[RMDB]
RNA sequence: GGGAACGACUCGAGUAGAGUCGAAAAGUGUCGGACUCGCAAGUGCGAAUAUAUUUUAUCCCUAAACAGGGAGUGGAAAGCACGUCCUGGAGUGGAAAACACGUCCAUCCCAAAGCGUGAAAUGAAAUACUGCUAGGUUAUUCGUAACCUAGCAGUAAAAAGAAACAACAACAACAAC
Reactivity to DMS in 0.01 (KOAc 150mM, MgCl2 10mM, bicine 150mM(pH8.5), 24C), signal-to-noise 3, nucleotides 027 to 126: g040u000g010u000c040g020g010a080c050u000c130g000c100a140a130g020u010g000c010g010a100a110u010a090u010a070u020u000u000u010a120u000c000c010c000u000a040a090a140c210a070g010g000g000a020g000u000g000g000a100a110a120g000c000a010c000g000u010c080c110u000g000g030a070g000u010g000g000a080a060a080a130c120a050c080g020u000c060c040a100u000c020c000c010a070a090a090g010c080g000u000g010a080a110a110u010g000a080a040a160
Reactivity to 2A3 in 0.01 (KOAc 150mM, MgCl2 10mM, bicine 150mM(pH8.5), 24C), signal-to-noise 2, nucleotides 027 to 126: g060u050g020u040c030g010g080a010c040u010c060g060c120a130a060g020u050g070c020g070a120a000u140a000u000a040u170u130u100u070a080u020c000c000c010u100a160a240a060c080a080g000g020g010a010g040u070g020g070a160a050a020g150c000a000c000g110u110c000c030u020g010g020a040g010u090g000g050a030a040a030a050c020a000c020g040u060c010c010a100u070c020c000c020a010a010a020g050c080g000u120g090a090a060a070u060g050a070a030a010